[RMDB]
RNA sequence: GGGAACGACUCGAGUAGAGUCGAAAAUUGCUUGCAAAGCAGAGAAUGAGUAGGAGUGAACCCGAGUGACUUCACCCGCCCUGUCCCCCACGUCAGGACAGGCUUGAGGCCUCUCUGGGCGUGAGCGCAAAGAGCGGUCAUUCGUGACCGCUCUUUGAAAAGAAACAACAACAACAAC
Reactivity to DMS in 0.01 (KOAc 150mM, MgCl2 10mM, bicine 150mM(pH8.5), 24C), signal-to-noise 4, nucleotides 027 to 126: u010u010g010c010u000u000g020c140a090a140a100g030c010a030g010a080g000a120a080u000g000a040g010u000a070g020g000a090g020u000g000a040a090c060c040c030g000a080g000u010g020a100c080u000u000c020a060c060c010c030g000c080c020c020u000g000u000c020c000c020c090c020a030c050g000u000c050a070g020g010a020c060a010g010g010c040u010u010g000a120g020g010c020c010u010c160u000c010u000g010g000g000c070g010u000g010a090g020c120g000
Reactivity to 2A3 in 0.01 (KOAc 150mM, MgCl2 10mM, bicine 150mM(pH8.5), 24C), signal-to-noise 2, nucleotides 027 to 126: u030u050g010c010u030u060g080c050a070a100a090g000c030a000g000a030g010a090a090u190g000a020g110u110a130g000g090a120g010u020g020a020a020c000c010c020g020a100g010u130g060a070c030u030u010c030a020c030c000c030g050c010c010c000u010g030u030c010c030c020c010c000a070c030g020u040c030a000g010g000a000c000a010g000g000c000u020u110g070a030g120g000c010c010u030c000u000c050u060g000g030g000c040g000u030g000a010g030c070g000